[RMDB]
RNA sequence: GGGAACGACUCGAGUAGAGUCGAAAACUGACUGAUUACUUCAAGAAGUCCCACUUUGAUCAUGUGCUCUCUAGUAUCAUAACUCAUCUGCAUCUAUCAGUCAGGGGGCAUAGCUACUAUAAAGCUAUCCCAUAAUUUAGUUCGCUAAAUUAUGGGAAAAAGAAACAACAACAACAAC
Reactivity to 2A3 in 0.01 (KOAc 150mM, MgCl2 10mM, bicine 150mM(pH8.5), 24C), signal-to-noise 6, nucleotides 027 to 126: c000u000g010a000c000u010g000a010u020u130a060c050u100u130c030a040a050g040a070a010g070u030c020c010c010a030c020u080u080u110g030a050u090c060a060u080g030u040g040c000u030c010u000c050u120a050g040u060a120u180c070a070u070a120a060c020u020c050a080u030c050u050g000c020a040u020c040u070a030u010c010a000g000u000c000a000g000g000g000g000g000c030a020u020a010g020c000u060a090c040u100a060u230a300a140a050g010c000u020a030
Reactivity to DMS in 0.01 (KOAc 150mM, MgCl2 10mM, bicine 150mM(pH8.5), 24C), signal-to-noise 9, nucleotides 027 to 126: c020u000g000a030c010u000g000a030u000u000a090c130u010u010c060a050a060g010a090a170g010u000c010c010c000a180c110u000u000u000g000a040u000c130a070u010g010u000g000c030u000c070u000c140u010a050g020u000a040u010c160a080u010a090a080c070u000c100a070u000c030u000g000c060a040u000c190u000a030u000c010a000g000u000c000a020g010g000g000g000g010c300a070u000a010g010c000u000a070c210u010a150u010a070a060a030g000c010u000a040